[RMDB]
RNA sequence: GGGAACGACUCGAGUAGAGUCGAAAACACGCACGACACCACAUCCACAGCCAAAGCAUGCGACGUGAUGUGUGUUUCACUGGUGCUGUGGAAUGCCUGCAGACGACGUCACUAGUGGAGGCAUGCCCGUCAUGCUCCGAUUCGUCGGAGCAUGACGAAAAGAAACAACAACAACAAC
Reactivity to DMS in 0.01 (KOAc 150mM, MgCl2 10mM, bicine 150mM(pH8.5), 24C), signal-to-noise 2, nucleotides 027 to 126: c070a040c070g010c000a060c040g000a020c020a060c030c050a120c100a050u000c030c070a020c080a090g020c020c080a090a100a010g000c060a070u000g010c020g060a270c160g000u040g000a050u010g030u040g000u020g020u000u000u000c050a060c080u010g000g010u010g000c040u030g020u010g000g010a020a030u000g060c010c000u000g040c000a030g000a030c050g010a070c060g000u030c050a030c090u020a080g030u000g000g000a070g000g010c070a030u000g000c030c060
Reactivity to 2A3 in 0.01 (KOAc 150mM, MgCl2 10mM, bicine 150mM(pH8.5), 24C), signal-to-noise 5, nucleotides 027 to 126: c050a020c010g030c020a040c050g080a010c010a020c050c010a000c000a070u000c020c000a050c020a020g000c000c030a060a080a000g050c050a060u080g020c040g070a130c080g120u090g070a210u030g040u000g020u030g030u070u060u050c150a130c090u100g120g050u110g060c040u030g000u000g000g000a100a040u050g050c000c010u050g000c020a010g000a090c060g040a070c070g100u050c020a030c110u050a050g060u040g070g020a020g000g000c000a000u110g030c000c000